[RMDB]
RNA sequence: GGGAACGACUCGAGUAGAGUCGAAAACUGUCGGUGAAUCCUCCCCUGAGAGGCCUCUUCCUAGGUCCGGAGUCUACCUCCAUCUGGUCUGUUCGGGCCCUCUUCGCCGGGGGGGCUCCUUCCCCAUAUCGCGGUGUCUUCGGACACCGCAAAAGAAACAACAACAACAAC
Reactivity to DMS in 0.01 (KOAc 150mM, MgCl2 10mM, bicine 150mM(pH8.5), 24C), signal-to-noise 1, nucleotides 027 to 129: c030u020g040u050c080g030g050u060g060a000a000u000c040c000u000c040c030c020c030u020g030a090g000a110g050g010c000c020u030c100u000u060c030c050u010a000g060g000u010c030c020g020g010a040g010u000c040u030a280c010c010u000c020c030a100u020c090u030g000g040u050c030u050g000u020u030c190g040g050g000c080c020c010u030c110u010u020c110g030c210c130g000g000g000g000g000g000g000c030u030c030c010u030u000c060c010c050c090a100u000a020u010c100
Reactivity to 2A3 in 0.01 (KOAc 150mM, MgCl2 10mM, bicine 150mM(pH8.5), 24C), signal-to-noise 5, nucleotides 027 to 129: c050u070g100u150c060g070g000u070g050a050a080u110c000c010u020c020c010c000c020u020g010a030g020a030g020g020c000c000u070c000u070u040c020c010u020a020g000g050u030c060c060g000g000a000g040u010c050u120a130c030c020u000c000c000a010u010c020u040g000g080u020c020u020g090u070u090c090g010g010g000c010c050c000u000c000u090u110c050g080c090c040g030g000g010g000g010g000g000c000u000c000c000u000u020c000c000c000c000a060u150a000u120c080